Annotation: The data come from the RNA Mapping Database (RMDB), library OK2TST. Chemical mapping of a 177-nucleotide RNA with DMS. For DMS the reverse transcriptase was MarathonRT.
[RMDB]
RNA sequence: GGGAACGACUCGAGUAGAGUCGAAAAAGAAGAAAUCGGGAGUAGCAAUAACGAAGAAAUGGAGACAGAUAAGGGCACAAACCAGGAUGUUCAAAAAGGAAAGGCUGAUGUUGUACCCGAUUAUACACAGUUCGAAGGUAUUCGUACCUUCGAACUGAAAAGAAACAACAACAACAAC
Reactivity to DMS in 0.01 (KOAc 150mM, MgCl2 10mM, bicine 150mM(pH8.5), 24C), signal-to-noise 1, nucleotides 027 to 126: a100g000a300a090g020a040a050a010u000c050g010g010g030a230g020u000a100g000c070a070a060u000a200a210c120g030a050a030g000a030a070a050u000g000g020a230g000a030c000a050g010a050u000a100a160g000g000g000c030a010c130a010a030a100c200c040a050g000g000a080u000g030u000u010c070a000a100a060a090a080g080g000a090a030a080g000g010c030u000g020a050u000g020u000u000g010u000a030c010c020c000g010a040u000u000a150u000a080c170a100
The DMS profile rests on 507 reads.